RNA sequence: GGGAACGACUCGAGUAGAGUCGAAAAUUCGCCGAACACGCCGCGCCGGGCCUGAUCGAGCUCUUCUCGUCUCGGGCCGACGACCUUUCGGUCGAGUUGAGCGUGCAUCCCACCAGCCGGUUCCGCGUCAGUUUUGGGAUUUCGAUCCCAAAACUGAAAAAGAAACAACAACAACAAC
Reactivity to DMS in 0.01 (KOAc 150mM, MgCl2 10mM, bicine 150mM(pH8.5), 24C), signal-to-noise 2, nucleotides 027 to 126: u010u000c060g020c040c070g000a010a080c100a050c030g040c060c020g010c060g080c050c070g000g010g000c000c000u000g000a050u020c000g020a040g010c300u020c170u020u030c030u000c000g020u050c240u010c030g000g000g000c010c000g030a120c070g000a080c060c060u020u020u060c150g010g060u000c000g000a030g040u050u030g020a120g030c030g020u030g000c050a130u000c000c010c030a100c090c020a050g010c050c010g000g000u020u000c000c060g010c070g020
Reactivity to 2A3 in 0.01 (KOAc 150mM, MgCl2 10mM, bicine 150mM(pH8.5), 24C), signal-to-noise 4, nucleotides 027 to 126: u050u040c030g020c050c010g010a050a020c090a020c060g030c030c000g040c030g020c030c040g160g030g000c000c010u040g000a030u030c020g040a030g070c100u090c030u300u090c000u020c010g040u020c030u000c110g030g000g000c010c000g010a000c020g020a020c000c020u140u300u240c180g010g000u000c020g000a020g060u090u170g060a070g020c020g000u040g000c010a080u040c000c020c000a020c010c010a030g020c020c000g020g000u040u000c030c010g050c010g060
Structure probing data (DMS and 2A3) for a 177-nucleotide construct. For 2A3, 2,779 sequencing reads were counted. The RNA was probed in 150 mM KOAc, 10 mM MgCl2 and 150 mM bicine (pH 8.5) at 24 C. Reactivities are given for positions 27 through 126. The DMS profile rests on 2,039 reads.